[RMDB]
RNA sequence: GGGAACGACUCGAGUAGAGUCGAAAAAAAAAAAGAUAUGGAUAUCACGAAGUCUUCAACAGCCUACCCACCCUAUCGGAAACGAUAGGAGGGACAUGAAGCCGAGUGAUAUCCUAAGUCAAAAAAAGUAAUGUAAUAUCUUCGGAUAUUACAUUACAAAAGAAACAACAACAACAAC
Reactivity to DMS in 0.01 (KOAc 150mM, MgCl2 10mM, bicine 150mM(pH8.5), 24C), signal-to-noise 2, nucleotides 027 to 126: a000a020a040a020a040a060a050g000a030u000a300u010g000g000a010u000a000u000c000a020c000g010a180a050g000u010c010u000u000c000a020a110c190a150g000c110c060u000a090c000c010c020a300c160c000c020u000a000u000c000g010g000a130a060a120c000g000a010u010a010g000g010a130g020g020g000a030c120a100u000g000a000a000g000c020c020g000a300g010u000g010a000u000a010u000c000c000u000a010a030g010u020c030a010a010a040a070a040a060a110
Reactivity to 2A3 in 0.01 (KOAc 150mM, MgCl2 10mM, bicine 150mM(pH8.5), 24C), signal-to-noise 2, nucleotides 027 to 126: a000a030a000a060a000a010a130g080a050u150a040u130g020g000a010u000a000u010c010a010c020g070a150a010g030u000c030u010u000c020a110a120c030a130g090c030c040u110a130c080c010c010a130c070c010c000u000a000u000c000g020g020a080a030a030c010g000a000u000a000g000g020a000g010g000g030a020c030a070u060g000a010a000g010c020c010g030a030g010u000g000a000u000a000u000c000c000u010a010a000g000u010c040a000a030a000a000a090a030a160
Structure probing data (DMS and 2A3) for a 177-nucleotide construct.
The 2A3 profile rests on 4,353 reads.
Conditions: 150 mM KOAc, 10 mM MgCl2 and 150 mM bicine (pH 8.5), 24 C.
Values cover nucleotides 27 to 126.
The DMS profile rests on 2,433 reads.